RNA sequence: GGGAACGACUCGAGUAGAGUCGAAAAGAGGACGGACUACUGGCUGUCUCCGGAGUAGGGCAGAGGCUGUAUCCGGUCUGCAAACACGACAGGGCUGGAAUGUCACCUGGAGUGACGUCCGAAGAGAGGGAUGCUUCUGCUUCGGCAGGAGCAUCCCAAAAGAAACAACAACAACAAC
Reactivity to 2A3 in 0.01 (KOAc 150mM, MgCl2 10mM, bicine 150mM(pH8.5), 24C), signal-to-noise 2, nucleotides 027 to 126: g100a010g010g000a000c000g010g000a020c030u000a000c030u090g070g020c020u030g070u070c000u000c050c070g060g000a080g080u180a040g030g000g030c040a000g000a010g040g000c000u000g050u050a100u070c040c030g020g070u000c030u040g000c010a050a130a020c100a010c070g080a050c040a050g000g000g000c010u050g020g160a170a040u130g040u050c010a000c080c010u040g030g000a070g000u010g060a070c000g010u000c040c010g070a140a000g070a010g000a010
Reactivity to DMS in 0.01 (KOAc 150mM, MgCl2 10mM, bicine 150mM(pH8.5), 24C), signal-to-noise 1, nucleotides 027 to 126: g010a130g070g000a040c000g010g010a000c130u050a030c050u010g000g000c000u030g000u010c020u000c030c130g010g020a080g000u010a170g010g000g000c020a050g050a210g020g000c050u000g000u000a220u000c010c010g000g000u000c020u000g020c030a150a070a060c200a010c000g000a120c000a120g000g000g000c000u030g000g000a020a040u020g000u000c020a150c000c000u000g000g000a090g020u000g030a020c000g000u000c020c000g000a090a070g010a080g050a250